Structure probing data (2A3) for a 207-nucleotide construct. For 2A3 the reverse transcriptase was SuperScript II with manganese. The reactions ran in a buffer of 150 mM KOAc, 10 mM MgCl2 and 150 mM bicine (pH 8.5), at 24 C. Source: RMDB library OK3TST, as collected in RNAgym. For 2A3, 506 sequencing reads were counted.
[RMDB]
RNA sequence: GGGAACGACUCGAGUAGAGUCGAAAAAGACGGCUUGAUUCCGUGAUUAAUUAGACAUUUAACAACUUCCGGACGCACAUAUGCUCUCGUAUCCGACUUUGAAUACAGAUGAGAGAUGAUAUACAGAUGCAAUACGGUACCGCAAUUUCGUAGUUGAGCUUAACGCUUUGUUCGCAAAGCGUUAAGCAAAAGAAACAACAACAACAAC
Reactivity to 2A3 in 0.01 (KOAc 150mM, MgCl2 10mM, bicine 150mM(pH8.5), 24C), signal-to-noise 1, nucleotides 027 to 156: a000g100a010c080g000g000c090u070u100g020a010u140u000c000c000g010u040g000a100u000u300a010a090u050u100a020g090a100c080a080u040u040u170a120a050c080a040a000c030u110u020c020c000g000g000a000c020g000c010a000c000a050u070a000u090g010c030u000c050u020c030g070u060a030u000c010c040g070a080c090u070u070u130g200a070a070u070a090c000a030g050a060u110g000a020g000a000g000a040u070g020a010u020a000u000a050c020a030g120a100u040g010c010a020a020u050a140c000g010g000u000a020c030c030g150c070a110a130u000u020u170c040g090u100a080g010u030u020g010a000